The record gives the reactivity of an RNA of 177 nucleotides to DMS and 2A3. Reactivities are given for positions 27 through 126. The data come from the RNA Mapping Database (RMDB), library OK2TST. The reactions ran in a buffer of 150 mM KOAc, 10 mM MgCl2 and 150 mM bicine (pH 8.5), at 24 C.
RNA sequence: GGGAACGACUCGAGUAGAGUCGAAAAUGCACCGGGAAACGCUGCGCAGCUUCGGCCGUUAUGAACUCACCACCGCUUAUACCCCUGCCGGGCAGUUACAGAGCCAGCACCUGAACAGCCUGCUGUCCCGCUUUGGUAUAUUCGUAUACCAAAGCGGAAAAGAAACAACAACAACAAC
Reactivity to DMS in 0.01 (KOAc 150mM, MgCl2 10mM, bicine 150mM(pH8.5), 24C), signal-to-noise 2, nucleotides 027 to 126: u000g020c100a110c050c020g000g000g010a130a080a080c080g010c040u000g000c090g010c080a100g000c080u010u000c060g000g010c030c040g000u010u000a110u000g000a070a090c040u000c030a070c060c030a070c040c020g010c060u000u000a080u010a150c050c020c040c050u010g000c070c040g000g000g000c060a040g000u000u000a090c060a090g000a100g010c010c020a060g010c020a050c040c030u000g010a030a100c070a060g020c010c000u000g010c030u010g010u000c080
Reactivity to 2A3 in 0.01 (KOAc 150mM, MgCl2 10mM, bicine 150mM(pH8.5), 24C), signal-to-noise 1, nucleotides 027 to 126: u090g030c030a010c030c020g000g020g040a110a140a010c040g000c050u060g000c090g000c040a060g030c020u060u030c000g030g000c030c000g030u000u060a110u150g030a030a010c010u020c060a020c040c000a030c050c010g020c070u110u110a100u120a160c000c000c010c020u010g040c050c000g000g010g000c010a000g020u000u020a100c040a020g030a010g080c020c020a000g000c020a060c000c000u010g020a020a000c000a000g000c020c000u030g040c020u000g040u130c000